[RMDB]
Source information:
The data come from the RNA Mapping Database (RMDB), library OK2TST. An RNA of 177 nucleotides, treated with DMS and 2A3 and read out base by base. Reactivities are given for positions 27 through 126. For 2A3, 24,241 sequencing reads were counted. Conditions: 150 mM KOAc, 10 mM MgCl2 and 150 mM bicine (pH 8.5), 24 C.
RNA sequence: GGGAACGACUCGAGUAGAGUCGAAAAGCAAGAAAAGCUGUUCUGCACAUUAGGUAAAAACAUUCACACCGUGGCGAUCAAUGGUGACUUUGAUGCUUGCCAAGCGCUAGUGAAACAAGCUUUUGAAGGAUCAUUAUUAGUUCGCUAAUAAUGAUCCAAAAGAAACAACAACAACAAC
Reactivity to DMS in 0.01 (KOAc 150mM, MgCl2 10mM, bicine 150mM(pH8.5), 24C), signal-to-noise 9, nucleotides 027 to 126: g010c110a120a130g000a030a030a050a040g020c020u000g000u000u000c060u000g020c040a060c050a110u010u010a080g010g010u010a020a040a070a080a050c090a070u010u000c110a090c040a040c050c020g030u000g010g010c080g000a050u010c040a050a060u010g000g000u010g000a110c150u000u000u000g010a040u000g010c090u000u000g000c000c010a160a090g010c070g010c090u000a070g010u000g010a100a040a050c060a050a080g010c030u000u000u000u000g010a120a150
Reactivity to 2A3 in 0.01 (KOAc 150mM, MgCl2 10mM, bicine 150mM(pH8.5), 24C), signal-to-noise 9, nucleotides 027 to 126: g050c030a050a040g080a110a090a000a000g000c010u010g030u060u020c060u160g040c030a030c010a120u120u180a060g040g000u080a080a060a020a050a030c040a070u100u120c020a030c000a000c060c020g030u030g020g000c040g030a040u100c060a070a070u060g010g020u040g040a060c040u100u070u120g070a100u090g040c050u030u040g000c000c010a040a020g030c030g020c090u060a040g030u010g080a020a010a010c040a100a060g030c010u040u040u040u080g070a120a050